[RMDB]
RNA sequence: GGGAACGACUCGAGUAGAGUCGAAAAAUUGUAUUAUUCUCGUUCAUAUUACAACUAUACCAAAUGAACAUAUCAUUAUAUUGUAUGCCAUUCUAACUUUAUGACUACACAUCCACACACAUAUAUAGCGCAUGCUGUAUUUCGAUACAGCAUGCGCAAAAGAAACAACAACAACAAC
Reactivity to 2A3 in 0.01 (KOAc 150mM, MgCl2 10mM, bicine 150mM(pH8.5), 24C), signal-to-noise 2, nucleotides 027 to 126: a030u090u080g030u140a090u200u000a180u000u060c040u030c000g080u100u070c080a000u050a070u190u140a070c040a070a020c130u130a020u150a250c000c000a090a090a000u170g000a000a000c050a060u160a000u090c030a030u060u300a010u070a160u110u140g100u000a070u090g130c010c000a120u040u200c080u000a040a020c080u000u000u270a050u060g130a020c000u070a060c040a000c020a120u010c020c000a000c000a030c000a000c010a080u000a000u130a000u090a050